[RMDB]
RNA sequence: GGGAACGACUCGAGUAGAGUCGAAAAAUGUACGAGCAUCUGAACGGCUUUGUCCGCUAUCUGAACAGACACUACACUGGUAUCAACGCUUCACUCCGCGUGAACAGAUACAUGAGAUCGGCAUACGAUGCUCCGCGCCUACAGGUGCCCGGUACGGAUCAGCCGUAUAGUUCGCUAUACGGCUGAUAAAAGAAACAACAACAACAAC
Reactivity to 2A3 in 0.01 (KOAc 150mM, MgCl2 10mM, bicine 150mM(pH8.5), 24C), signal-to-noise 4, nucleotides 027 to 156: a000u140g000u020a010c000g000a000g000c000a000u000c000u020g030a100a050c110g020g000c060u110u080u120g080u080c030c040g050c080u080a020u060c010u040g040a100a040c020a040g170a030c050a050c180u180a030c100a020c050u070g040g020u050a020u040c040a140a090c050g020c070u100u070c020a050c080u070c070c200g030c060g040u000g010a020a020c010a010g000a010u000a000c030a050u100g030a030g010a070u070c020g020g000c020a050u100a170c040g090a050u140g070c020u010c030c010g050c020g010c010c000u020a070c010a000g000g010u010g000c000c000c040g100g020u020a000c000g000g030
Reactivity to DMS in 0.01 (KOAc 150mM, MgCl2 10mM, bicine 150mM(pH8.5), 24C), signal-to-noise 2, nucleotides 027 to 156: a190u010g070u000a050c060g000a070g000c000a030u000c040u000g010a170a050c020g000g010c090u000u000u000g000u010c050c020g030c070u000a040u020c100u000g000a090a060c010a050g030a040c060a020c020u000a090c080a080c040u000g000g050u000a050u000c030a060a060c080g000c100u000u000c060a080c060u010c070c220g000c100g000u000g020a060a110c050a100g020a050u000a090c080a070u010g010a080g010a080u000c060g000g000c040a100u000a030c110g010a100u000g010c010u000c030c090g030c140g000c060c000u010a300c030a040g010g030u010g010c000c020c030g010g020u000a030c050g040g020